[RMDB]
RNA sequence: GGGAACGACUCGAGUAGAGUCGAAAAGAUAUGGACCGCCCACAGGGAGCUGAUGGACUCGGAAACGAGUCCACAGCGAAGAACUGUGUAACAAGUCCUAAGUCAAAGACGAGCUUCGGCUCGUCAACAGCCAAACAAGGUUCGCCUUGUUUGGCUGAAAAGAAACAACAACAACAAC
Reactivity to 2A3 in 0.01 (KOAc 150mM, MgCl2 10mM, bicine 150mM(pH8.5), 24C), signal-to-noise 1, nucleotides 027 to 126: g040a000u000a010u090g000g010a000c010c010g080c060c090c000a010c000a000g000g000g030a040g000c010u040g010a300u010g120g010a010c010u000c010g000g000a060a010a010c000g010a040g050u020c000c000a000c000a000g000c020g010a020a020g020a000a010c000u000g020u000g030u160a120a070c190a210a030g010u010c000c010u010a030a000g030u010c080a240a010a110g000a010c000g000a000g030c030u070u180c250g140g000c020u020c000g000u010c000a000a020
Reactivity to DMS in 0.01 (KOAc 150mM, MgCl2 10mM, bicine 150mM(pH8.5), 24C), signal-to-noise 2, nucleotides 027 to 126: g000a010u000a150u010g000g010a010c010c080g000c300c190c010a020c000a010g000g000g000a050g010c000u020g000a130u000g000g010a000c000u000c000g010g000a010a020a050c000g010a010g010u000c000c000a000c030a000g000c000g000a030a130g000a080a190c010u000g010u010g000u010a080a190c270a260a110g000u000c010c000u000a040a190g000u000c050a050a070a140g000a010c000g010a000g000c020u000u010c230g020g010c020u000c000g000u000c010a020a080